Source: RMDB library OK2TST, as collected in RNAgym. The record gives the reactivity of an RNA of 177 nucleotides to 2A3 and DMS.
RNA sequence: GGGAACGACUCGAGUAGAGUCGAAAAACCAUGGGCCACCCGCUCGACCCCGGCACCAUGAUUGGCGCGCAGGCGAGCACCGAGCAGCUCGACAAGAUUCUGUCCUACCUCGACAUUGGCCGCGCCGUACAUGAGGCAUUUUCGAAUGCCUCAUGUAAAAAGAAACAACAACAACAAC
Reactivity to 2A3 in 0.01 (KOAc 150mM, MgCl2 10mM, bicine 150mM(pH8.5), 24C), signal-to-noise 2, nucleotides 027 to 126: a020c040c010a060u050g000g000g080c060c040a030c020c070c030g090c040u060c070g180a220c030c020c040c020g030g000c060a080c090c030a020u120g060a140u100u230g000g020c020g000c020g000c050a030g030g000c000g010a010g000c010a010c010c030g000a030g010c000a000g000c000u010c040g020a060c050a070a030g000a130u180u000c030u060g090u020c000c000u030a080c000c010u060c020g030a060c080a190u040u160g040g000c040c010g010c010g030c020c020g010
Reactivity to DMS in 0.01 (KOAc 150mM, MgCl2 10mM, bicine 150mM(pH8.5), 24C), signal-to-noise 4, nucleotides 027 to 126: a100c040c010a090u020g010g010g000c010c040a090c130c030c090g030c060u000c060g010a160c040c030c020c080g010g020c050a070c020c030a050u010g020a170u020u010g020g020c020g010c030g020c070a130g010g000c020g000a030g010c030a090c100c080g000a050g030c100a050g030c300u010c000g010a040c160a110a130g010a080u000u000c060u000g000u000c010c030u000a120c130c030u000c030g000a020c070a090u000u000g020g040c070c030g010c020g010c040c020g020
The 2A3 profile rests on 1,751 reads. High 2A3 reactivity points to a flexible backbone, as in loops and unpaired stretches.